[RMDB]
RNA sequence: GGGAACGACUCGAGUAGAGUCGAAAAAGCCGCCGUGCAUAAACCUCGGCGUCGAAUCGGCGAGAACCCAUGUCAGCCAGGUUAACCGCGCGUUCGCGAGCGCUGGCAAGAUAGCCCGCAUGCCCGCGGUAAUUAUCAUAUUCGUAUGAUAAUUACCAAAAGAAACAACAACAACAAC
Reactivity to DMS in 0.01 (KOAc 150mM, MgCl2 10mM, bicine 150mM(pH8.5), 24C), signal-to-noise 9, nucleotides 027 to 126: a190g020c090c010g020c040c020g020u000g010c100a140u010a100a090a100c180c020u000c080g020g010c010g010u000c080g010a180a080u010c110g010g010c010g000a130g000a110a110c040c020c030a100u010g010u000c030a180g010c010c020a060g000g000u000u000a090a130c210c040g010c030g010c150g010u000u000c070g010c010g000a070g010c060g010c030u010g010g010c020a070a060g010a090u010a100g010c010c010c030g010c040a110u010g000c010c010c020g010c130
Reactivity to 2A3 in 0.01 (KOAc 150mM, MgCl2 10mM, bicine 150mM(pH8.5), 24C), signal-to-noise 7, nucleotides 027 to 126: a000g010c020c010g010c010c010g020u030g000c040a140u140a160a140a090c000c010u020c080g030g000c010g010u030c020g020a050a080u100c040g010g000c020g030a070g030a110a070c020c010c010a030u080g070u020c020a010g010c020c000a020g040g020u040u050a050a030c040c020g030c000g010c040g160u120u130c050g010c040g030a050g040c070g010c050u030g010g000c000a020a020g050a120u100a030g040c020c020c000g000c020a020u080g020c010c000c020g030c040